[RMDB]
RNA sequence: GGGAACGACUCGAGUAGAGUCGAAAAUUAUUGAGCGUAGAUGUCACUGUCACGAUACGAGUAAGUGACUCUCGUGUACUACUGGCGAAUGAGACAGAGACAUUAUAUGCUCGUGCCAGUCAAUAAAGGGUAGUCAAAGAUUCGUCUUUGACUACCCAAAAGAAACAACAACAACAAC
Reactivity to 2A3 in 0.01 (KOAc 150mM, MgCl2 10mM, bicine 150mM(pH8.5), 24C), signal-to-noise 1, nucleotides 027 to 126: u140u100a080u080u240g010a010g040c080g000u020a000g010a000u080g010u000c020a010c020u010g040u020c000a000c110g020a020u070a130c060g010a020g030u020a190a200g050u080g120a040c000u000c020u010c050g020u040g040u020a020c010u020a020c020u030g300g000c040g070a150a110u120g020a040g030a020c000a010g030a000g020a020c020a010u050u030a150u020a020u300g030c030u010c000g000u000g000c000c000a140g080u260c060a060a050u130a160a030a050
Reactivity to DMS in 0.01 (KOAc 150mM, MgCl2 10mM, bicine 150mM(pH8.5), 24C), signal-to-noise 2, nucleotides 027 to 126: u030u000a030u010u010g030a040g010c010g050u000a000g000a010u010g010u000c020a070c000u000g000u000c010a070c060g010a100u010a080c020g010a040g020u020a060a130g020u000g000a060c080u010c160u020c170g010u000g030u000a020c070u010a070c040u000g030g020c020g000a120a050u010g000a090g010a040c010a010g010a070g000a030c010a010u010u000a050u010a070u010g010c010u000c020g000u000g010c020c040a120g000u020c110a030a090u010a080a090a090
Source information:
Structure probing data (2A3 and DMS) for a 177-nucleotide construct. Source: RMDB library M2PK90, as collected in RNAgym. DMS adducts were read by reverse transcription with MarathonRT. Conditions: 150 mM KOAc, 10 mM MgCl2 and 150 mM bicine (pH 8.5), 24 C.